RNA sequence: GGGAACGACUCGAGUAGAGUCGAAAAGAUAUGGAUCAUGAACUACGGAUAGCGUUUGACGUGCAUCGGAAACGAUGCACCGAGCUACGCAUGAUCCUAAGUCAAAACUAACACUUCGGUGUUAGAACCUUUCCGAUCAGUUCGCUGAUCGGAAAGGAAAAGAAACAACAACAACAAC
Reactivity to DMS in 0.01 (KOAc 150mM, MgCl2 10mM, bicine 150mM(pH8.5), 24C), signal-to-noise 2, nucleotides 027 to 126: g010a020u010a100u010g000g010a000u000c000a020u010g000a150a160c230u000a210c220g020g000a220u000a010g000c010g000u010u000u010g000a080c300g000u000g000c000a020u000c000g000g000a060a010a100c010g000a020u030g000c000a020c010c000g000a040g000c010u010a030c230g000c000a000u000g000a020u000c000c040u000a010a080g000u000c010a050a080a080a200c000u000a000a000c000a000c000u000u010c230g000g000u000g000u000u000a000g010a090a170
Reactivity to 2A3 in 0.01 (KOAc 150mM, MgCl2 10mM, bicine 150mM(pH8.5), 24C), signal-to-noise 2, nucleotides 027 to 126: g000a000u010a010u060g010g010a000u000c000a000u030g120a180a100c150u270a160c300g180g170a300u180a170g000c010g050u130u200u210g020a010c000g000u000g000c010a000u010c010g020g000a000a000a040c000g000a000u010g000c000a030c000c010g000a000g000c040u040a050c110g000c000a000u010g010a000u000c000c000u000a020a020g010u010c020a000a010a100a140c000u000a000a010c000a000c000u050u080c300g130g000u000g020u020u000a000g010a040a030